[RMDB]
RNA sequence: GGGAACGACUCGAGUAGAGUCGAAAAUCAAGUAGCCAAGUGCUAUGGGGAGUCUGUGUUAGUUAAUGCUGCUAACACACAUCUUAAGCAUGGCGGUGGUAUCGCUGGUGCUAUUAAUGCGGCUUCAAUCACUGAUACUUCGGUAUCAGUAAAAGAAACAACAACAACAAC
Reactivity to 2A3 in 0.01 (KOAc 150mM, MgCl2 10mM, bicine 150mM(pH8.5), 24C), signal-to-noise 9, nucleotides 027 to 129: u130c040a050a030g050u020a000g010c010c020a190a070g090u090g150c020u030a070u110g040g030g040g010a010g040u010c040u070g000u010g000u000u000a010g000u020u150a150a080u300g160c160u070g000c000u030a010a000c000a000c000a000c010a050u030c040u080u100a060a010g010c010a000u030g020g000c070g010g010u070g080g130u140a060u140c020g000c040u070g090g040u020g000c020u030a040u180u150a110a060u130g040c050g010g000c000u040u040c040a050a100u150c040
Reactivity to DMS in 0.01 (KOAc 150mM, MgCl2 10mM, bicine 150mM(pH8.5), 24C), signal-to-noise 9, nucleotides 027 to 129: u020c080a080a060g000u020a050g030c030c020a130a120g020u010g020c020u020a040u000g020g010g000g010a020g020u020c090u000g030u010g000u020u010a010g000u010u050a070a120u090g030c220u040g000c020u020a010a010c010a000c020a030c120a060u020c070u020u020a080a040g030c020a030u000g000g010c050g000g010u000g000g010u060a090u040c040g030c040u030g030g020u020g030c000u000a070u040u050a040a050u040g030c220g020g030c020u000u000c040a080a150u040c150